[RMDB]
RNA sequence: GGGAACGACUCGAGUAGAGUCGAAAAGAUAUGGAUCAAGGGGAGCUCUGUAUCGGAAACGAUACUGAGCAUCGAUCCUGAUCCUAAGUCAAACUAGGAUGAAAGGGUUCGCCCUUUCAUCCUAGAAGUAAACUCAAUGGUUCGCCAUUGAGUUUACAAAAGAAACAACAACAACAAC
Reactivity to 2A3 in 0.01 (KOAc 150mM, MgCl2 10mM, bicine 150mM(pH8.5), 24C), signal-to-noise 3, nucleotides 027 to 126: g020a000u040a010u090g010g000a010u020c110a300a300g040g000g010g010a000g000c000u020c020u030g020u010a010u000c000g010g000a080a040a000c010g010a000u010a000c000u010g000a000g010c010a020u110c000g000a040u020c010c010u010g000a000u010c010c010u010a100a010g050u030c030a010a050a190c010u000a000g000g010a000u000g010a010a000a000g040g020g030u150u240c300g150c000c010c000u000u000u010c010a000u000c000c000u000a000g000a000a000
Reactivity to DMS in 0.01 (KOAc 150mM, MgCl2 10mM, bicine 150mM(pH8.5), 24C), signal-to-noise 4, nucleotides 027 to 126: g000a010u000a260u010g010g000a000u000c000a050a100g010g010g020g010a050g010c000u010c000u000g000u000a000u010c000g000g000a060a050a100c010g000a010u000a000c000u000g000a020g030c000a110u000c120g000a080u000c000c000u000g000a010u000c000c000u000a050a090g010u000c020a120a110a270c000u000a000g000g000a010u000g000a010a000a010g000g000g000u000u010c290g000c000c000c000u000u000u000c010a000u000c000c000u000a010g000a020a090
The record gives the reactivity of an RNA of 177 nucleotides to 2A3 and DMS. The data come from the RNA Mapping Database (RMDB), library TTRDEL. Values cover nucleotides 27 to 126. The reactions ran in a buffer of 150 mM KOAc, 10 mM MgCl2 and 150 mM bicine (pH 8.5), at 24 C. 2A3 adducts were read by reverse transcription with SuperScript II with manganese. DMS adducts were read by reverse transcription with MarathonRT. The DMS profile rests on 4,812 reads.